[RMDB]
RNA sequence: GGGAACGACUCGAGUAGAGUCGAAAACGUAGUCACAGACAGGUUCGACAACAUUCAAGCCAAACAUCUCUGUGUAUUGGCCGAUGUAUAUUGCAGCUCCAAGAGGUGUCCUUCGAUAAUCGGGAUGCCCGUGUGUCUAAUUCGUUAGACACACGGGAAAAGAAACAACAACAACAAC
Reactivity to DMS in 0.01 (KOAc 150mM, MgCl2 10mM, bicine 150mM(pH8.5), 24C), signal-to-noise 2, nucleotides 027 to 126: c090g010u020a040g010u000c030a070c070a140g040a060c110a050g010g010u020u000c050g020a080c080a080a040c050a030u000u010c090a110a140g000c020c000a000a040a050c010a090u000c160u010c160u000g020u000g020u010a110u000u000g000g020c020c040g000a040u000g000u000a020u000a110u010u000g000c160a060g020c030u000c030c060a030a070g010a090g010g010u010g010u000c010c020u000u010c080g010a120u010a040a110u000c090g010g000g020a040u010g010
Reactivity to 2A3 in 0.01 (KOAc 150mM, MgCl2 10mM, bicine 150mM(pH8.5), 24C), signal-to-noise 3, nucleotides 027 to 126: c020g060u070a000g070u060c020a030c010a120g060a050c020a010g070g060u070u080c030g040a030c030a060a020c020a030u070u130c030a020a010g010c000c030a010a010a000c020a070u080c160u060c160u300g050u050g000u040a300u110u060g000g000c000c000g050a010u040g040u060a040u030a010u090u160g040c020a010g030c010u020c010c000a050a010g040a020g080g000u030g000u050c000c020u070u090c030g110a120u140a210a060u180c010g000g050g010a030u070g070

An RNA of 177 nucleotides, treated with DMS and 2A3 and read out base by base. The RNA was probed in 150 mM KOAc, 10 mM MgCl2 and 150 mM bicine (pH 8.5) at 24 C.